[RMDB]
RNA sequence: GGGAACGACUCGAGUAGAGUCGAAAAGUCUUCCAUUAGAAAGUAUUAGCGCACUUGGUAGGUAUAUUCCUGAGGACCUUUUUAUUCCAUUUUUCAUGUAACCAUAGUUAGCUUUUAUCAGACAAAGUCAUGUGAAAUACUUCGGUAUUUCACAUGAAAAAGAAACAACAACAACAAC
Reactivity to 2A3 in 0.01 (KOAc 150mM, MgCl2 10mM, bicine 150mM(pH8.5), 24C), signal-to-noise 2, nucleotides 027 to 126: g000u010c030u110u000c020c010a100u100u150a080g100a130a160a000g020u070a060u180u100a040g000c040g000c060a040c030u010u000g030g000u020a050g000g110u060a070u020a040u260u100c010c020u070g070a110g070g080a110c010c000u120u100u020u080u180a110u190u050c020c050a040u060u030u030u100u170c060a060u110g040u090a040a020c010c020a030u030a080g050u010u020a010g040c000u000u030u050u090a060u080c050a000g080a150c080a020a050a150g070
Reactivity to DMS in 0.01 (KOAc 150mM, MgCl2 10mM, bicine 150mM(pH8.5), 24C), signal-to-noise 3, nucleotides 027 to 126: g000u000c050u010u000c020c060a150u000u000a120g010a110a120a110g010u000a050u010u000a080g030c040g010c080a050c050u000u000g010g010u010a040g010g000u000a050u000a100u000u010c020c020u000g000a100g030g010a050c070c010u010u010u010u010u010a080u050u020c040c010a080u010u010u000u020u010c090a060u000g000u010a070a070c050c040a050u010a060g000u000u000a100g010c040u010u000u000u000a050u000c110a100g010a120c110a070a080a100g000